[RMDB]
RNA sequence: GGGAACGACUCGAGUAGAGUCGAAAAGCCAUGUGGACAAAUGAAAAAAUGCCUUUUGUCUACAGAUUGCAGCGAUCCUACAUAAAUAUAUGGAGGUCUCUGUCUGGCUUAGGACAGCUGGCUAAGUGUUCAGAAGGCAAUUCGUUGCCUUCUGAACAAAAGAAACAACAACAACAAC
Reactivity to 2A3 in 0.01 (KOAc 150mM, MgCl2 10mM, bicine 150mM(pH8.5), 24C), signal-to-noise 3, nucleotides 027 to 126: g030c000c020a050u040g000u020g030g010a000c030a000a000a050u100g190a050a070a110a060a030a040u170g040c050c000u000u000u010u000g000u000c000u000a000c020a000g060a020u060u300g010c010a000g000c020g040a060u110c010c020u020a030c020a040u140a090a300a010u300a020u120a030u100g030g000a000g010g000u000c000u000c010u000g080u070c020u010g040g030c000u050u070a060g020g050a000c030a010g010c040u050g020g000c000u020a060a060g070u010
Reactivity to DMS in 0.01 (KOAc 150mM, MgCl2 10mM, bicine 150mM(pH8.5), 24C), signal-to-noise 1, nucleotides 027 to 126: g000c050c010a190u040g000u000g000g000a010c020a000a010a100u010g040a000a010a110a200a040a140u110g000c060c020u000u000u000u000g000u030c000u000a000c030a010g000a110u020u040g030c000a010g070c130g000a060u130c000c000u010a050c040a030u000a030a210a130u000a190u010a020u000g000g000a020g000g050u060c000u000c000u000g000u030c070u010g000g060c020u000u000a040g000g030a010c140a050g010c000u000g020g000c050u000a030a120g000u000
An RNA of 177 nucleotides, treated with 2A3 and DMS and read out base by base. It was measured as part of the RMDB library RFM100. For DMS the reverse transcriptase was MarathonRT. Conditions: 150 mM KOAc, 10 mM MgCl2 and 150 mM bicine (pH 8.5), 24 C. Values cover nucleotides 27 to 126. For DMS, 1,159 sequencing reads were counted.